This 207-nucleotide RNA was probed chemically with 2A3 and DMS.
RNA sequence: GGGAACGACUCGAGUAGAGUCGAAAAAGUUUGUAUAAGCACUGUUUAAGGCUCCCAGUGCAUGCCAAUUGGUGUUUACAGACGAGUAUGGUAUUGACCAUAUGAUACUAUUCUCUCUCUCAGGAGAGGAGAAUAGAUAACUACAAAGGAGCUACAAAUUUAUGCAGGGGUUCGCCCCUGCAUAAAUAAAAGAAACAACAACAACAAC
Reactivity to 2A3 in 0.01 (KOAc 150mM, MgCl2 10mM, bicine 150mM(pH8.5), 24C), signal-to-noise 1, nucleotides 027 to 156: a000g040u050u010u000g070u000a100u020a070a140g000c000a010c000u000g100u080u090u180a050a000g060g010c000u000c010c000c000a000g000u010g000c010a020u070g000c010c040a240a250u160u300g060g000u070g020u080u070u070a050c030a020g000a010c050g010a000g090u020a020u060g000g000u030a130u080u300g260a020c010c010a000u000a000u010g040a040u030a050c000u000a000u000u030c000u000c000u020c010u050c000u020c080a120g160g000a020g010a030g040g030a030g000a000a000u000a000g000a000u060a030a090c020u070a050c120a000a070a030g000g000a010g010c000u010a000c040a000a170
Reactivity to DMS in 0.01 (KOAc 150mM, MgCl2 10mM, bicine 150mM(pH8.5), 24C), signal-to-noise 1, nucleotides 027 to 156: a130g030u010u000u000g010u000a070u010a090a160g020c000a010c000u000g000u000u000u000a080a140g030g030c010u010c000c100c030a120g030u010g000c000a180u000g030c030c050a160a060u000u000g060g030u000g010u000u000u000a110c010a020g000a140c050g010a150g010u000a030u010g000g000u010a250u010u000g020a110c030c000a020u000a030u010g000a230u000a070c000u000a020u010u000c000u000c000u000c000u000c010u010c190a240g080g020a050g050a010g000g010a050g010a050a000u000a000g000a120u000a020a150c090u000a110c070a030a160a080g010g000a100g020c030u000a040c050a140a140
The data come from the RNA Mapping Database (RMDB), library OK3TST.